Source information
An RNA of 177 nucleotides, treated with DMS and read out base by base. It was measured as part of the RMDB library TTRDES. Values cover nucleotides 27 to 126. The RNA was probed in 150 mM KOAc, 10 mM MgCl2 and 150 mM bicine (pH 8.5) at 24 C.
[RMDB]
RNA sequence: GGGAACGACUCGAGUAGAGUCGAAAAGAUAUGGAUUCGAUACAACUUUUGACGGCUCACAGUCGGAAACGACUGCUGAGCCGAUAAGUUGUCGAAUCCUAAGUCAAACACGAUCUUCGGAUCGUGACUCACAACAUGGCUUCGGCCAUGUUGUGAGAAAAGAAACAACAACAACAAC
Reactivity to DMS in 0.01 (KOAc 150mM, MgCl2 10mM, bicine 150mM(pH8.5), 24C), signal-to-noise 2, nucleotides 027 to 126: g000a050u000a300u000g000g000a040u000u000c000g010a210u040a090c090a010a010c010u000u000u000u010g010a290c300g040g000c010u000c020a050c010a010g000u000c000g010g000a050a080a190c010g000a010c000u000g030c270u000g020a000g010c000c000g000a000u000a000a000g000u000u000g000u000c000g000a000a000u000c000c000u020a020a100g020u010c020a110a090a250c030a000c010g010a000u000c010u000u020c210g010g000a010u000c000g020u000g000a140